[RMDB]
RNA sequence: GGGAACGACUCGAGUAGAGUCGAAAAGCAAAGAAAUUUUAUCCCAAUAAGGCGAAGUAAGCAAGUCGACCCAACGCGAGGGCGCUAGCGAGCUUACGAGCCGUAGCAGACUAAUAGCGAGAAAAAACUAACGCUCAACGUUCGCGUUGAGCGUUAGAAAAGAAACAACAACAACAAC
Reactivity to 2A3 in 0.01 (KOAc 150mM, MgCl2 10mM, bicine 150mM(pH8.5), 24C), signal-to-noise 1, nucleotides 027 to 126: g110c030a020a100a080g150a050a190a010u100u150u050u070a060u050c100c030c000a000a060u130a060a000g000g000c010g010a010a090g020u020a000a000g000c020a020a070g010u010c020g150a300c000c000c000a110a080c050g030c080g220a150g000g030g000c010g000c010u080a000g050c000g070a020g050c010u000u020a000c000g000a000g000c010c000g000u010a000g030c010a000g040a070c020u070a180a110u060a140g070c060g040a090g070a110a130a050a030a000a020
Reactivity to DMS in 0.01 (KOAc 150mM, MgCl2 10mM, bicine 150mM(pH8.5), 24C), signal-to-noise 1, nucleotides 027 to 126: g000c190a030a060a090g000a110a070a060u010u000u000u000a140u000c000c000c010a170a160u040a090a100g000g020c030g000a110a190g000u000a000a010g000c030a120a170g020u000c030g010a190c100c020c000a030a080c080g030c110g010a100g010g040g000c010g020c170u020a090g020c050g000a180g010c000u000u000a020c070g000a300g000c010c000g010u000a080g010c100a110g000a110c170u000a030a100u010a050g000c030g040a070g000a020a010a040a050a070a160
An RNA of 177 nucleotides, treated with 2A3 and DMS and read out base by base. The 2A3 profile rests on 662 reads. DMS adducts were read by reverse transcription with MarathonRT. Source: RMDB library M2PK90, as collected in RNAgym. For 2A3 the reverse transcriptase was SuperScript II with manganese. The reactions ran in a buffer of 150 mM KOAc, 10 mM MgCl2 and 150 mM bicine (pH 8.5), at 24 C.